[RMDB]
RNA sequence: GGGAACGACUCGAGUAGAGUCGAAAAGAAAGUCCGAACCGGCGGUUACAGUCCGCGACCCGAUCGCCUCCAGCGACCGGUUGACCAGGUGAAAUUCCUGGACCGACGGUUAAAGUCCGGAUGGGAGAAAACAAUGGCUUGUUCGCAAGCCAUUGAACGUUAUAUACACGUUCGCGUGUAUAUAACGAAAAGAAACAACAACAACAAC
Reactivity to DMS in 0.01 (KOAc 150mM, MgCl2 10mM, bicine 150mM(pH8.5), 24C), signal-to-noise 3, nucleotides 027 to 156: g010a070a110a160g040u000c000c020g000a040a050c030c010g030g010c010g010g000u000u010a110c110a070g000u000c000c010g010c000g020a300c300c010c010g000a000u010c010g000c000c010u010c110c080a250g000c020g030a020c000c000g020g000u010u000g000a100c000c010a010g040g000u010g010a040a300a130u000u000c000c010u000g000g010a020c010c000g030a100c060g010g000u000u020a020a110a300g000u000c040c010g010g000a060u000g010g000g000a250g000a110a090a060a140c000a020a010u000g000g010c010u000u000g010u000u000c290g000c020a040a000g010c010c000a000u000u000g000a030a150
Reactivity to 2A3 in 0.01 (KOAc 150mM, MgCl2 10mM, bicine 150mM(pH8.5), 24C), signal-to-noise 2, nucleotides 027 to 156: g060a010a060a020g070u050c040c030g010a030a010c000c000g020g010c010g000g000u000u000a010c000a000g000u000c000c000g030c010g000a040c020c000c000g010a030u010c000g000c010c020u060c020c000a010g000c000g010a000c000c010g020g000u020u010g010a000c000c000a000g000g000u000g010a000a000a000u000u000c000c000u000g000g000a000c000c000g000a000c000g000g000u010u090a040a000a010g010u000c010c040g040g070a040u180g160g030g010a010g020a020a070a000a010c010a000a000u000g000g000c000u000u010g020u060u050c080g020c170a020a000g000c000c000a000u000u000g000a010a000